[RMDB]
RNA sequence: GGGAACGACUCGAGUAGAGUCGAAAAGGGGCAAUGUGGAAACGUCAGGACUGCGCAGUCCGGCAACAUCAGCAGAGAGCCCGCUAUACGUGACGGAUUGGCUGAAGCGUACAGAAAUAUUGAGCCUCUCCUGAUAAGCUUUCGAGCUUAUCAGGAGAAAAGAAACAACAACAACAAC
Reactivity to DMS in 0.01 (KOAc 150mM, MgCl2 10mM, bicine 150mM(pH8.5), 24C), signal-to-noise 3, nucleotides 027 to 126: g010g010g000g000c030a090a080u040g000u020g000g020a030a040a040c240g000u010c300a250g050g000a030c020u000g040c270g000c160a050g060u010c000c010g010g000c300a060a030c080a050u000c080a260g000c110a010g000a030g010a130g000c030c000c000g010c000u000a010u000a090c060g010u040g010a300c020g020g010a300u000u000g000g010c060u000g020a080a300g010c020g000u000a020c010a070g000a050a010a060u080a180u030u000g000a040g040c020c000u000
Reactivity to 2A3 in 0.01 (KOAc 150mM, MgCl2 10mM, bicine 150mM(pH8.5), 24C), signal-to-noise 4, nucleotides 027 to 126: g010g000g000g000c000a000a050u030g030u030g040g040a030a010a010c000g010u010c090a130g010g010a000c020u070g130c210g050c230a000g000u000c000c000g000g040c000a060a020c010a090u060c010a010g010c030a000g050a000g030a000g080c020c010c000g000c000u010a010u000a000c030g020u060g040a010c020g060g030a140u150u140g170g020c020u040g020a020a000g020c010g020u000a020c010a010g080a040a070a020u280a110u110u180g040a070g030c010c000u010
Chemical mapping of a 177-nucleotide RNA with DMS and 2A3.
The reactions ran in a buffer of 150 mM KOAc, 10 mM MgCl2 and 150 mM bicine (pH 8.5), at 24 C.
Source: RMDB libraries RFM100 and RFMREP, as collected in RNAgym.
For DMS the reverse transcriptase was MarathonRT.